This 177-nucleotide RNA was probed chemically with DMS and 2A3. Values cover nucleotides 27 to 126.

RNA sequence: GGGAACGACUCGAGUAGAGUCGAAAACUUAUUUAGAUAAAUGGACUCGCUAAGGAUGUGCGCCAUUUAUCAGGAAUGCCAUUAUGAGCCUGAUUAUUGAUGUUAUUUCGCGUAAAACAUCCGUCAAACGUAUCAGGUGAUUCGUCACCUGAUACGUAAAAGAAACAACAACAACAAC
Reactivity to DMS in 0.01 (KOAc 150mM, MgCl2 10mM, bicine 150mM(pH8.5), 24C), signal-to-noise 3, nucleotides 027 to 126: c030u010u010a050u000u000u020a170g020a030u000a000a000a020u000g000g000a270c190u000c040g010c020u010a080a120g000g000a020u010g030u000g010c070g010c020c010a010u000u010u000a000u000c000a100g000g000a030a030u000g000c090c040a090u010u010a070u000g000a100g010c110c120u000g000a070u000u010a100u010u000g000a020u000g010u000u000a040u000u000u000c020g050c270g000u010a030a030a050a040c030a020u010c010c050g010u010c220a070a090
Reactivity to 2A3 in 0.01 (KOAc 150mM, MgCl2 10mM, bicine 150mM(pH8.5), 24C), signal-to-noise 1, nucleotides 027 to 126: c020u110u050a090u200u180u130a050g030a010u010a020a030a000u020g010g000a000c090u070c160g000c040u050a090a040g040g020a040u050g030u010g030c030g000c000c000a010u000u000u000a010u000c000a010g000g010a000a080u040g040c010c020a010u060u050a020u080g020a030g060c000c130u070g090a070u060u080a040u020u150g050a020u040g060u090u040a070u000u050u020c070g000c070g080u090a050a050a070a050c000a020u020c010c000g120u050c030a130a090
Source information: The DMS profile rests on 2,749 reads. High 2A3 reactivity points to a flexible backbone, as in loops and unpaired stretches.